[RMDB]
RNA sequence: GGGAACGACUCGAGUAGAGUCGAAAAAGAGUGGACUGCGAGGGACAAAACACGGUCUUGAUGCAUCCUGACUGUUCCACCUCGCUCUUGGCGGGCCACGGCGACUGUUAAUGGCGAAUAACGGUGGCUAGCUAACCCAGUUCGCUGGGUUAGCUAGAAAAGAAACAACAACAACAAC
Reactivity to 2A3 in 0.01 (KOAc 150mM, MgCl2 10mM, bicine 150mM(pH8.5), 24C), signal-to-noise 4, nucleotides 027 to 126: a000g110a030g010u090g010g030a050c120u040g000c020g020a020g020g020g030a040c060a010a140a070a030c110a060c100g050g040u040c030u060u070g040a110u250g010c030a030u030c000c010u000g040a090c020u020g020u130u030c030c000a030c020c000u000c000g000c000u000c030u020u040g030g000c010g010g010g000c020c000a040c040g070g010c020g040a060c020u030g000u040u030a070a040u070g030g000c030g030a080a050u120a070a040c040g020g000u000g020g020
Reactivity to DMS in 0.01 (KOAc 150mM, MgCl2 10mM, bicine 150mM(pH8.5), 24C), signal-to-noise 3, nucleotides 027 to 126: a090g010a090g000u020g000g020a060c120u010g000c050g010a190g000g000g000a100c100a070a070a100a160c290a070c200g000g000u000c000u020u000g000a170u050g000c180a100u030c010c090u000g000a090c060u000g010u020u000c030c060a080c030c000u000c030g020c000u000c140u000u010g010g000c030g010g010g020c030c030a060c120g000g010c000g000a050c020u000g000u000u000a030a080u050g010g010c050g000a070a100u000a070a090c070g000g030u020g000g010